[RMDB]
RNA sequence: GGGAACGACUCGAGUAGAGUCGAAAAGAUAUGGACACAGGCGCUCGAUAAGCUACGUUCGGAAACGAACGAAUAGCUUUUGACGAGCGCUGUGUCCUAAGUCAAACUCGCAGGUUCGCCUGCGAGAGACGGUACAACCGUUCGCGGUUGUACCGUCAAAAGAAACAACAACAACAAC
Reactivity to 2A3 in 0.01 (KOAc 150mM, MgCl2 10mM, bicine 150mM(pH8.5), 24C), signal-to-noise 1, nucleotides 027 to 126: g030a000u040a000u070g020g000a010c000a000c010a020g300g180c030g070c000u020c040g150a160u070a300a020g000c000u010a020c020g000u000u030c000g000g000a010a040a020c010g000a010a010c020g000a040a150u050a000g020c000u020u040u060u300g300a190c080g010a000g000c000g030c000u000g000u000g010u000c000c010u000a030a000g000u000c000a060a000a060c010u000c020g000c010a000g000g100u070u210c300g170c110c000u000g000c000g000a000g000a010
Reactivity to DMS in 0.01 (KOAc 150mM, MgCl2 10mM, bicine 150mM(pH8.5), 24C), signal-to-noise 1, nucleotides 027 to 126: g000a000u000a270u030g000g010a020c000a000c000a030g040g000c000g010c000u000c000g000a180u010a000a020g020c000u010a020c010g000u000u000c000g030g010a080a070a150c000g000a000a020c000g000a100a110u000a050g000c000u000u000u000u010g040a190c090g000a030g010c000g000c000u000g000u000g000u000c000c000u000a010a010g020u000c010a250a240a190c040u000c010g020c020a020g010g020u000u000c290g000c010c000u000g000c000g000a000g000a040

Chemical mapping of a 177-nucleotide RNA with 2A3 and DMS. The data come from the RNA Mapping Database (RMDB), library TTRDES. The RNA was probed in 150 mM KOAc, 10 mM MgCl2 and 150 mM bicine (pH 8.5) at 24 C.